An RNA of 177 nucleotides, treated with DMS and 2A3 and read out base by base. DMS adducts were read by reverse transcription with MarathonRT. The data come from the RNA Mapping Database (RMDB), library OK2TRN. The RNA was probed in 150 mM KOAc, 10 mM MgCl2 and 150 mM bicine (pH 8.5) at 24 C. Values are in units of 0.01, from 0 to 300, in steps of 10. For 2A3 the reverse transcriptase was SuperScript II with manganese.
RNA sequence: GGGAACGACUCGAGUAGAGUCGAAAAUUAUUCGGCCCGUGGUUCCGCGCCAUCGAGAAGGAGAUUCUAGCAGCGCUUGCACCCAAUAUCUUCUAUGGUGAUGCUUAUGAGGAUACAGUUUUGGCCGCUAGUGAUCGAGAUUCGUCUCGAUCACUAGAAAAGAAACAACAACAACAAC
Reactivity to DMS in 0.01 (KOAc 150mM, MgCl2 10mM, bicine 150mM(pH8.5), 24C), signal-to-noise 3, nucleotides 027 to 126: u010u010a130u020u020c040g030g000c020c020c110g030u000g010g010u000u010c080c200g010c070g000c030c040a060u000c060g000a070g010a050a090g010g010a130g010a090u010u020c050u000a080g040c290a140g020c050g010c060u010u010g020c080a130c030c020c030a070a180u000a010u000c010u000u000c010u000a070u000g010g020u000g000a110u010g000c020u000u000a070u000g010a080g000g000a030u000a060c140a060g000u000u000u000u000g000g020c060c080g000
Reactivity to 2A3 in 0.01 (KOAc 150mM, MgCl2 10mM, bicine 150mM(pH8.5), 24C), signal-to-noise 2, nucleotides 027 to 126: u100u050a080u060u060c010g010g000c050c030c010g030u080g000g020u080u000c030c000g000c010g030c000c010a070u110c090g080a030g040a110a020g090g080a160g010a060u100u000c040u070a020g000c050a010g010c050g000c020u020u080g000c020a090c000c000c010a030a040u060a020u100c040u070u010c010u020a060u060g050g030u060g100a080u140g020c020u110u080a090u220g040a040g060g000a020u040a130c040a100g040u000u030u080u150g000g000c000c000g000